RNA sequence: GGGAACGACUCGAGUAGAGUCGAAAAGAUAUCAACUGAAAAAGUCAUCAACAAAAAAGUUGAAUAACUCAUCAACAUCUAAAACUUUUAUUUUGGUUAUUUCUUCAUACGACAAAGUGAUAGUAACUGCUAUAUCCAUCUUCGGAUGGAUAUAGCAAAAAGAAACAACAACAACAAC
Reactivity to DMS in 0.01 (KOAc 150mM, MgCl2 10mM, bicine 150mM(pH8.5), 24C), signal-to-noise 1, nucleotides 027 to 126: g070a030u050a050u000c210a100a130c040u000g030a000a150a080a060a160g000u020c060a060u020c050a040a110c070a000a090a080a060a140a010g000u000u020g000a100a030u000a030a070c050u010c080a150u040c070a060a060c090a070u040c080u000a040a110a050a030c000u040u000u000u000a080u000u010u000u000g000g000u000u000a070u000u000u010c040u000u000c020a020u010a060c150g000a080c150a030a020a120g020u010g020a060u050a030g000u010a100a060c090
Reactivity to 2A3 in 0.01 (KOAc 150mM, MgCl2 10mM, bicine 150mM(pH8.5), 24C), signal-to-noise 3, nucleotides 027 to 126: g050a000u100a000u050c030a010a050c060u060g030a000a050a000a100a000g020u010c060a080u030c010a020a060c060a040a080a000a150a070a060g000u050u030g020a000a040u060a060a020c020u000c140a080u120c020a020a030c010a030u130c060u180a040a090a080a040c010u000u040u070u040a180u030u070u130u030g040g010u010u020a040u010u070u000c010u010u010c030a020u060a100c080g050a050c170a030a070a030g040u040g040a020u020a120g080u020a010a040c020
This 177-nucleotide RNA was probed chemically with DMS and 2A3. 2A3 adducts were read by reverse transcription with SuperScript II with manganese. Values cover nucleotides 27 to 126. Conditions: 150 mM KOAc, 10 mM MgCl2 and 150 mM bicine (pH 8.5), 24 C. DMS adducts were read by reverse transcription with MarathonRT. The data come from the RNA Mapping Database (RMDB), library RFM100. DMS (dimethyl sulfate) methylates the pairing face of unpaired adenines and cytosines.